Annotation: Structure probing data (2A3) for a 207-nucleotide construct. For 2A3, 3,767 sequencing reads were counted. The reactions ran in a buffer of 150 mM KOAc, 10 mM MgCl2 and 150 mM bicine (pH 8.5), at 24 C. Source: RMDB library ARCHII, as collected in RNAgym. 2A3 adducts were read by reverse transcription with SuperScript II with manganese.

RNA sequence: GGGAACGACUCGAGUAGAGUCGAAAACAGCCUCGGGUGCACGUGGGCCCGCGGUCGAGCCCUAAGGCCGGGCGUGGGGCUGGGGUCGCAGGGAGAGUAACCGUGAGCCGGCGCCCAGCCUUCAGGGCGCUCCCUCGAGCUAUGGGAGCUGCCCCCGGACGUACUCUAUGUUCGCAUAGAGUACGUCAAAAGAAACAACAACAACAAC
Reactivity to 2A3 in 0.01 (KOAc 150mM, MgCl2 10mM, bicine 150mM(pH8.5), 24C), signal-to-noise 4, nucleotides 027 to 156: c030a000g020c000c010u010c010g010g010g010u080g060c100a040c200g070u150g030g070g000c000c000c000g010c020g000g030u080c050g030a030g020c000c000c020u020a030a020g000g020c010c010g020g020g000c010g010u060g010g280g000g000c010u040g010g070g020g030u070c050g040c170a150g030g060g050a080g020a000g040u050a030a010c010c040g100u120g110a000g010c020c000g030g000c000g010c010c000c000a000g000c000c000u030u030c030a010g000g000g020c000g000c000u010c000c020c000u030c060g140a120g050c080u140a080u130g010g000g000a020g010c020u050g030c010c010c000c000c020g050